The data come from the RNA Mapping Database (RMDB), library M2RFPK. An RNA of 207 nucleotides, treated with 2A3 and DMS and read out base by base.

RNA sequence: GGGAACGACUCGAGUAGAGUCGAAAAAGCAGGAGUACGCUCCUGCAUGGGUAGACGAAUUGACCCCAACUGAAGUUCAACUCUAACGUUAAAAGGAGUUUUAUAUGACUGGACGUACGCGUCCAGAUGACGAUUUCAUUCUUCGGAAUGAAAUCAACCAUGCAUUUAUCUUCGGAUAAAUGCAUGGAAAAGAAACAACAACAACAAC
Reactivity to 2A3 in 0.01 (KOAc 150mM, MgCl2 10mM, bicine 150mM(pH8.5), 24C), signal-to-noise 5, nucleotides 027 to 156: a000g020c000a000g000g000a000g010u030a050c120g010c100u000c000c000u000g000c000a000u030g000g010g020u130a110g060a160c100g060a100a120u080u130g090a100c020c010c010c010a070a070c060u170g070a130a020g050u150u090c050a030a010c000u000c010u060a090a040c110g130u150u200a040a090a060a070g040g010a010g010u020u010u120u090a160u060a090u120g130a100c000u000g000g000a000c000g010u070a010c200g000c010g110u000c000c010a000g000a010u060g040a030c100g000a000u000u000u000c010a000u000u010c010u030u040c070g100g000a010a000u000g000a000a000a000u000c000a000a000
Reactivity to DMS in 0.01 (KOAc 150mM, MgCl2 10mM, bicine 150mM(pH8.5), 24C), signal-to-noise 2, nucleotides 027 to 156: a050g010c000a020g050g030a030g040u020a120c270g000c020u000c000c000u000g020c000a000u010g000g030g030u000a090g020a250c030g020a120a140u000u000g010a120c000c000c020c070a070a180c090u000g010a060a190g000u000u000c050a030a060c000u000c020u000a080a140c100g020u000u010a050a040a090a140g000g010a100g010u000u010u010u000a150u000a120u010g010a140c020u000g000g000a030c010g010u010a120c260g050c010g030u000c000c000a040g010a020u010g010a070c070g010a030u000u020u000c000a010u000u010c000u000u000c300g090g020a020a010u000g000a000a000a000u000c000a060a120

The RNA was probed in 150 mM KOAc, 10 mM MgCl2 and 150 mM bicine (pH 8.5) at 24 C. Reactivities are given for positions 27 through 156. For 2A3 the reverse transcriptase was SuperScript II with manganese. The 2A3 profile rests on 3,133 reads.